[RMDB]
RNA sequence: GGGAACGACUCGAGUAGAGUCGAAAAACUCCGGACGAUCGUCCCGGCACUCUGGGGAUCGCUGGUCGCCUGGCUCAUCGGCGUCCUGCCCGUCCUCGCCCCGCUCGAGGCGCAGCUCGCGGGCCUCGCCGAGAUCCUGCUGCCGAUCGUGACCGCGAUCCAUUUCUUGUUUCGACAAGAAAUGGAUAAAAGAAACAACAACAACAAC
Reactivity to 2A3 in 0.01 (KOAc 150mM, MgCl2 10mM, bicine 150mM(pH8.5), 24C), signal-to-noise 2, nucleotides 027 to 156: a000c010u000c020c010g000g040a040c010g030a060u060c030g060u080c060c040c000g060g000c110a070c040u190c100u100g030g000g010g030a050u050c090g010c110u040g000g020u030c030g030c050c030u050g020g000c010u000c060a300u050c140g000g010c010g000u020c010c030u060g010c010c000c000g040u050c000c010u000c010g010c000c020c020c050g120c080u210c110g070a180g000g000c030g000c020a010g000c040u200c180g020c010g010g010g000c000c000u010c010g000c000c000g010a010g010a010u070c000c020u050g040c040u050g000c070c010g030a040u050c020g000u010g040a060c010c000g030c010g040
Reactivity to DMS in 0.01 (KOAc 150mM, MgCl2 10mM, bicine 150mM(pH8.5), 24C), signal-to-noise 1, nucleotides 027 to 156: a070c020u000c020c000g020g010a100c000g000a090u000c020g030u000c020c000c010g040g000c080a130c160u000c080u000g000g020g020g010a050u000c040g030c030u020g020g010u000c010g010c040c010u030g000g030c070u010c100a110u000c010g000g030c000g010u020c040c060u020g010c020c010c000g000u020c110c010u010c020g000c010c010c010c050g000c180u000c130g010a040g050g010c020g010c140a030g030c050u000c020g000c060g010g030g050c000c180u000c000g010c030c000g010a090g010a110u020c040c050u010g010c040u010g010c050c010g030a080u000c030g000u000g010a120c010c000g010c040g000